This 207-nucleotide RNA was probed chemically with 2A3 and DMS. Conditions: 150 mM KOAc, 10 mM MgCl2 and 150 mM bicine (pH 8.5), 24 C. For 2A3 the reverse transcriptase was SuperScript II with manganese. The data come from the RNA Mapping Database (RMDB), library OK3TST.
[RMDB]
RNA sequence: GGGAACGACUCGAGUAGAGUCGAAAAGAUGGUAUGGCGUCCAAACUCCUGAUGUCGUACAAGGACCCCAAGUACCUAUCACGGUAAAAAUUAAAUUGGACCACCACGCAGAGUAGGCAUGGGAGUUUUCAUUCUUAAUGUACUUCCUGAAAUACUCCCCUAGCAGUAUAUUCGUAUACUGCUAGGGAAAAGAAACAACAACAACAAC
Reactivity to 2A3 in 0.01 (KOAc 150mM, MgCl2 10mM, bicine 150mM(pH8.5), 24C), signal-to-noise 4, nucleotides 027 to 156: g070a040u100g010g020u100a050u090g050g040c090g020u000c030c010a100a090a080c110u090c030c020u020g030a040u030g070u110c100g000u020a020c050a070a070g060g020a130c010c050c020c000a060a020g040u020a050c010c010u070a080u170c090a040c150g000g030u080a070a030a050a060a050u190u250a090a070a080u070u050g010g000a020c000c020a020c010c010a020c050g050c060a010g010a000g020u020a010g020g040c070a050u100g010g030g000a000g010u040u050u030u020c010a020u060u030c080u170u280a100a050u020g000u010a010c000u000u010c000c000u020g020a080a000a040u050a020c010u010c020
Reactivity to DMS in 0.01 (KOAc 150mM, MgCl2 10mM, bicine 150mM(pH8.5), 24C), signal-to-noise 1, nucleotides 027 to 156: g010a180u000g020g020u000a010u010g010g030c090g010u020c000c050a000a080a160c060u000c010c000u020g000a060u020g040u010c030g000u000a020c000a080a220g030g030a190c050c000c040c000a020a250g000u000a030c020c020u000a080u000c040a080c100g000g020u000a000a050a070a050a160u000u000a040a050a270u000u000g050g010a130c020c040a090c020c000a030c050g000c030a160g010a160g020u000a060g000g000c050a080u000g010g000g000a030g000u000u000u020u020c020a010u000u000c200u020u020a060a060u000g010u000a040c020u000u000c030c010u000g010a030a050a100u000a020c020u010c050